[RMDB]
RNA sequence: GGGAACGACUCGAGUAGAGUCGAAAACAAGCCUGCCGUUGACAUGCAGCAGGUGCAUCCCCAGUGACAUGGCCUUGUCCUGCCCUGCUUGGGCAGAGAGAGAGCGCUGUGGCUUUCAGGAUGUAUAGGGCUCUUGGUGGUCGUCACGAUCAUUAUAUCAUUAGGAGGCUUUCGAGCCUCCUAAUGAAAAAGAAACAACAACAACAAC
Reactivity to DMS in 0.01 (KOAc 150mM, MgCl2 10mM, bicine 150mM(pH8.5), 24C), signal-to-noise 1, nucleotides 027 to 156: c100a150a250g010c020c000u000g000c000c000g000u000u000g010a110c150a110u000g000c050a050g000c010a060g020g000u000g000c100a090u000c010c010c000c070a110g010u000g010a060c070a050u000g030g030c000c010u000u000g020u000c010c000u010g010c000c010c010u010g010c210u000u020g050g020g000c020a030g000a100g000a210g000a300g020a050g070c070g000c020u000g030u000g000g000c010u000u020u000c060a080g000g020a040u010g020u000a060u010a070g040g010g010c000u000c020u000u010g020g000u000g000g000u010c020g000u000c120a140c070g030a180u000c030a050u000u000a110u000a150
Reactivity to 2A3 in 0.01 (KOAc 150mM, MgCl2 10mM, bicine 150mM(pH8.5), 24C), signal-to-noise 2, nucleotides 027 to 156: c050a040a010g010c020c000u000g000c010c020g050u010u180g250a150c060a080u170g010c030a020g000c000a020g030g010u010g050c000a050u050c000c000c010c000a020g050u020g070a000c010a020u130g000g000c000c000u070u060g130u180c000c020u020g000c000c000c000u160g090c120u160u300g010g000g010c010a000g000a000g010a010g000a000g000a000g000c150g010c060u010g000u020g120g000c020u090u130u140c020a080g000g090a050u030g010u040a030u050a080g030g080g000c040u010c000u060u040g070g010u050g020g030u040c040g030u030c020a000c080g060a040u100c040a000u020u210a080u040a000